[RMDB]
RNA sequence: GGGAACGACUCGAGUAGAGUCGAAAAUCCUAAGUCAGAGAGAGGUUAGACCAUAUAACUACCCACCGCUGUCGGAAACGACAGCGAGGUUAUACAUUUCUAACUACCCACCUCUCUGAUAUGGAAAAACUAUUGCAGUCUUCGGACUGCAAUAGAAGCAUUACUUGUCGUUCGCGACAAGUAAUGCAAAAGAAACAACAACAACAAC
Reactivity to 2A3 in 0.01 (KOAc 150mM, MgCl2 10mM, bicine 150mM(pH8.5), 24C), signal-to-noise 1, nucleotides 027 to 156: u050c020c000u030a080a060g020u000c000a000g000a000g000a000g000a020g030g010u000u020a010g020a060c000c030a020u000a000u000a060a000c020u080a060c060c050c090a030c000c010g000c000u000g000u000c000g020g060a120a040a040c010g020a000c000a010g000c010g000a010g000g010u020u000a000u000a010c060a050u090u160u000c000u020a000a000c000u080a120c070c080c030a070c010c000u000c010u010c000u000g000a000u000a030u000g030g000a070a130a000a020a030c010u020a000u020u000g000c000a000g010u020c010u060u190c300g220g020a010c000u010g000c000a000a000u000a000g000a000a010